[RMDB]
RNA sequence: GGGAACGACUCGAGUAGAGUCGAAAAGCUGGGAAGGAUUUUUUCCCUGCCUGUCUGUCGCGCUCUCUGCACCCUCCGAUCUCUCUCUUCUAUCGCAUGCGCAGGAGCGGAUACCCACUUGUACGUCACUAUCAUCUGGGUUCGCCCAGAUGAUAGUAAAAGAAACAACAACAACAAC
Reactivity to 2A3 in 0.01 (KOAc 150mM, MgCl2 10mM, bicine 150mM(pH8.5), 24C), signal-to-noise 1, nucleotides 027 to 126: g060c010u060g000g050g010a040a050g150g070a260u050u210u050u000u120u120c000c020c020u000g000c020c010u060g040u120c060u090g000u030c050g020c020g010c260u000c000u040c000u030g000c010a030c000c040c000u000c010c000g030a080u000c060u010c000u000c030u000c000u240u070c050u070a030u060c010g030c140a060u050g050c010g000c080a000g000g050a010g010c080g000g010a020u050a050c000c020c000a050c060u040u100g170u190a060c040g120u000c150
Reactivity to DMS in 0.01 (KOAc 150mM, MgCl2 10mM, bicine 150mM(pH8.5), 24C), signal-to-noise 1, nucleotides 027 to 126: g020c040u000g030g000g020a040a070g020g000a080u010u000u020u020u010u000c020c000c000u000g000c020c000u010g020u020c090u000g010u000c000g040c010g030c040u000c000u010c010u010g020c010a190c060c090c040u020c070c030g000a040u000c020u000c050u010c020u000c030u000u000c090u000a100u010c040g000c060a050u000g020c120g020c040a090g000g000a090g000c000g010g020a090u000a080c020c020c020a110c150u000u000g000u010a090c180g000u010c100